[RMDB]
This 177-nucleotide RNA was probed chemically with 2A3 and DMS.
Reactivities are given for positions 27 through 126.
Conditions: 150 mM KOAc, 10 mM MgCl2 and 150 mM bicine (pH 8.5), 24 C.
For 2A3 the reverse transcriptase was SuperScript II with manganese.
RNA sequence: GGGAACGACUCGAGUAGAGUCGAAAACGCUGUUCGAUCGUGUGAAGAGCAACUCGCGCUCGCUGAAGCGCCCGUCGAUCGACGACGAGACCGCCGAGAGCAUCGUGCGCCAGCUCCUCGCGGCGAAACCUACUCGGGUGUUCGCACCCGAGUAGGUAAAAGAAACAACAACAACAAC
Reactivity to 2A3 in 0.01 (KOAc 150mM, MgCl2 10mM, bicine 150mM(pH8.5), 24C), signal-to-noise 3, nucleotides 027 to 126: c040g020c050u030g110u150u030c040g030a180u000c020g000u100g010u060g050a100a240g040a030g060c090a060a070c050u060c100g000c010g000c010u000c020g100c100u110g050a150a000g040c010g010c000c000c010g080u090c010g000a120u060c080g180a140c020g000a010c010g020a040g070a130c040c020g050c020c100g100a120g000a010g050c030a100u140c140g050u050g050c040g040c020c020a030g000c000u000c000c000u000c020g000c010g000g000c010g040a100a030
Reactivity to DMS in 0.01 (KOAc 150mM, MgCl2 10mM, bicine 150mM(pH8.5), 24C), signal-to-noise 2, nucleotides 027 to 126: c020g000c050u000g010u000u000c020g010a060u000c020g000u000g010u000g060a090a100g000a060g020c080a120a160c190u000c070g020c010g010c020u000c080g000c140u000g000a260a040g010c040g020c060c010c010g020u000c000g030a190u000c070g000a140c000g020a000c020g030a090g030a120c180c030g020c020c040g000a190g030a040g010c090a100u000c120g040u000g000c070g010c030c110a230g000c040u000c030c040u000c060g000c000g000g000c010g000a030a040